[RMDB]
RNA sequence: GGGAACGACUCGAGUAGAGUCGAAAAAGCUGUGUUUGUACGAUUUGAAUCGAGGGUGACACUUCAGGCCGAUUGUUAUAGUUGUUUGGUUUGUGGCCUGGUGGCUUUAACAGCGGUGUGUUAUGGCCAAUAUUUAUAUAUUCGUAUAUAAAUAUUGAAAAGAAACAACAACAACAAC
Reactivity to DMS in 0.01 (KOAc 150mM, MgCl2 10mM, bicine 150mM(pH8.5), 24C), signal-to-noise 4, nucleotides 027 to 126: a060g010c050u010g010u010g000u020u000u020g010u020a090c030g000a040u010u010u040g000a090a080u010c020g000a060g000g010g010u000g000a090c040a040c050u010u010c020a020g000g010c000c010g010a070u030u020g020u020u010a080u020a150g010u010u000g000u000u020u020g020g000u010u020u020g010u020g000g000c020c010u000g000g020u010g010g010c010u010u010u010a030a030c040a060g010c040g000g020u010g010u010g000u000u010a020u010g000g000c120